[RMDB]
RNA sequence: GGGAACGACUCGAGUAGAGUCGAAAAGGCAUUAAGCGCCAGCAACGUUAUGUGGCAGAAGCCAUUACUGAAGAGUGGCGUAUGGCACCCGGUCCGCUUGAAGUGGCCUGGUUUGCGGAAGAGACGGGAGUACGCUUAGGUUCGCCUAAGCGUACUCAAAAGAAACAACAACAACAAC
Reactivity to DMS in 0.01 (KOAc 150mM, MgCl2 10mM, bicine 150mM(pH8.5), 24C), signal-to-noise 1, nucleotides 027 to 126: g010g000c040a100u000u010a130a180g020c050g000c020c010a110g000c100a070a150c150g000u000u000a060u020g000u000g020g020c020a130g030a070a240g000c010c020a000u020u020a020c100u030g010a070a190g000a130g000u000g000g000c000g000u000a120u020g000g000c030a050c200c050c010g000g010u000c020c000g000c050u020u030g010a180a080g020u000g000g020c000c000u010g000g000u000u000u000g020c020g030g000a150a170g000a090g000a110c060g000g020
Reactivity to 2A3 in 0.01 (KOAc 150mM, MgCl2 10mM, bicine 150mM(pH8.5), 24C), signal-to-noise 1, nucleotides 027 to 126: g080g000c020a030u000u170a170a070g010c030g020c040c010a040g030c020a100a020c040g030u160u140a140u270g050u080g030g000c040a010g110a300a000g040c020c010a010u000u110a070c050u080g070a050a080g070a110g080u020g000g040c000g010u030a080u150g040g060c020a010c000c010c000g070g010u080c030c020g050c090u040u130g090a180a050g010u030g030g010c000c020u030g000g060u050u130u130g010c040g010g010a030a030g020a000g030a070c130g110g000